RNA sequence: GGGAACGACUCGAGUAGAGUCGAAAAAAUUUGAUCUUUGACAGCUUUAUCAAUGGCGACAUACCGGCUUUCCAUGAUGACAACAAAGCCUUCGACAAGAUCAUUUUGGUUGUGGUUGCGCCCUUUGAAAAUGGCGUCUUAGGCACUAAAGAUGGUGCAUCAUGGCUAGAUUCGUCUAGCCAUGAUGAAAAGAAACAACAACAACAAC
Reactivity to 2A3 in 0.01 (KOAc 150mM, MgCl2 10mM, bicine 150mM(pH8.5), 24C), signal-to-noise 2, nucleotides 027 to 156: a000a000u170u110u070g090a110u020c010u030u010u100g020a020c010a070g040c020u120u230u090a080u070c020a140a120u020g020g000c000g130a140c020a150u300a140c030c020g230g000c100u090u110u070c000c000a030u120g000a000u030g030a140c060a070a000c040a000a180a130g050c050c120u100u150c050g090a110c060a090a020g030a090u020c020a020u040u020u070u060g070g000u020u020g020u020g010g010u010u020g010c020g000c000c000c000u000u110u100g130a110a160a030a030u050g040g020c000g000u000c010u040u070a070g010g000c030a010c100u040a220a050a000g120a110u260g030g030u000g010
Reactivity to DMS in 0.01 (KOAc 150mM, MgCl2 10mM, bicine 150mM(pH8.5), 24C), signal-to-noise 1, nucleotides 027 to 156: a030a050u020u000u010g000a000u000c020u000u010u040g000a160c070a040g010c000u000u000u000a160u010c080a100a020u000g000g020c040g000a140c100a040u010a080c140c030g030g000c090u000u010u010c040c020a110u000g000a090u000g000a110c080a090a090c090a060a070a070g060c000c060u000u000c020g000a300c240a070a090g000a060u000c000a060u000u000u000u000g020g030u000u000g040u000g010g030u000u000g030c000g040c040c030c060u000u000u000g010a040a060a060a150u000g040g020c060g040u000c030u000u000a030g010g030c060a070c030u000a050a020a140g010a150u000g030g010u000g030

Structure probing data (2A3 and DMS) for a 207-nucleotide construct. The DMS profile rests on 2,328 reads. DMS adducts were read by reverse transcription with MarathonRT. It was measured as part of the RMDB library OK3TST. Conditions: 150 mM KOAc, 10 mM MgCl2 and 150 mM bicine (pH 8.5), 24 C.